[RMDB]
RNA sequence: GGGAACGACUCGAGUAGAGUCGAAAAGAUAUGGACGUGGUCGGAGGCUUGGAUUUAUCGGAAACGAUUGUCAGCCUUGACCUGCGUCCUAAGUCAAAAGUUAUGCUGUGUUCGCACAGCAUAACAAGAACUAAUCAAACUUCGGUUUGAUUAGUUCAAAAGAAACAACAACAACAAC
Reactivity to DMS in 0.01 (KOAc 150mM, MgCl2 10mM, bicine 150mM(pH8.5), 24C), signal-to-noise 7, nucleotides 027 to 126: g000a040u000a300u010g010g010a000c000g030u000g010g010u000c000g010g010a020g000g020c000u000u010g030g000a030u000u000u000a010u000c010g010g000a130a090a190c000g020a010u000u000g000u000c010a060g000c000c000u000u000g000a010c000c010u010g040c000g010u000c000c000u000a020a090g010u000c040a080a070a120a140g000u000u000a000u000g000c000u000g020u000g010u000u020c240g010c010a000c000a010g000c000a000u000a000a000c010a080a080
Reactivity to 2A3 in 0.01 (KOAc 150mM, MgCl2 10mM, bicine 150mM(pH8.5), 24C), signal-to-noise 7, nucleotides 027 to 126: g030a010u070a030u130g000g000a000c000g000u020g010g030u030c090g140g030a010g000g020c070u180u260g150g010a060u280u300u250a030u060c010g030g020a080a040a040c010g010a010u000u030g030u030c010a000g000c000c000u000u010g000a010c000c000u010g010c010g000u000c000c000u000a050a040g020u020c030a060a040a000a110g000u010u000a010u000g000c000u000g000u010g040u090u110c300g060c080a000c000a010g000c000a000u000a000a000c000a000a020

An RNA of 177 nucleotides, treated with DMS and 2A3 and read out base by base. For 2A3 the reverse transcriptase was SuperScript II with manganese. The DMS profile rests on 14,619 reads. The data come from the RNA Mapping Database (RMDB), library TTRDEL. Reactivities are rounded to 0.1 and cut off at 0 and 3. For DMS the reverse transcriptase was MarathonRT. The reactions ran in a buffer of 150 mM KOAc, 10 mM MgCl2 and 150 mM bicine (pH 8.5), at 24 C.